[RMDB]
RNA sequence: GGGAACGACUCGAGUAGAGUCGAAAAGAUAUGGAAGGUUCAGAGCUAAGAGUCGGAAACGACUCCUCUAGCGACGAAGAACUUCCUAAGUCAAAGAUUGCGUACGUCUUCGGACGUACGCAAUCAACAUUCAUGAGUAGUUCGCUACUCAUGAAUGAAAAGAAACAACAACAACAAC
Reactivity to DMS in 0.01 (KOAc 150mM, MgCl2 10mM, bicine 150mM(pH8.5), 24C), signal-to-noise 7, nucleotides 027 to 126: g010a040u000a300u010g000g000a000a000g010g010u010u000c010a040g000a300g000c010u000a010a130g000a080g000u000c000g010g000a060a080a160c010g000a010c000u000c010c050u010c050u000a010g000c000g010a240c170g000a070a050g010a070a110c010u000u000c000c000u000a060a160g010u000c040a080a110a140g000a010u000u000g010c000g010u000a010c000g000u000c000u000u010c200g020g010a010c000g000u000a000c000g010c000a000a000u000c000a080a170
Reactivity to 2A3 in 0.01 (KOAc 150mM, MgCl2 10mM, bicine 150mM(pH8.5), 24C), signal-to-noise 4, nucleotides 027 to 126: g010a010u060a020u140g010g000a000a010g070g020u070u020c010a020g000a010g030c000u010a140a080g000a000g000u000c010g020g000a040a060a010c000g000a000c000u010c000c000u050c020u000a010g000c030g040a050c020g030a040a020g030a040a050c010u000u010c000c010u010a120a030g040u040c060a140a090a090g010a010u000u020g020c030g000u010a000c000g000u010c010u070u150c300g080g000a000c000g000u000a000c000g000c000a000a000u000c000a000a010
Structure probing data (DMS and 2A3) for a 177-nucleotide construct. The RNA was probed in 150 mM KOAc, 10 mM MgCl2 and 150 mM bicine (pH 8.5) at 24 C. Reactivities are rounded to 0.1 and cut off at 0 and 3. The data come from the RNA Mapping Database (RMDB), library TTRDEL. For 2A3, 12,759 sequencing reads were counted.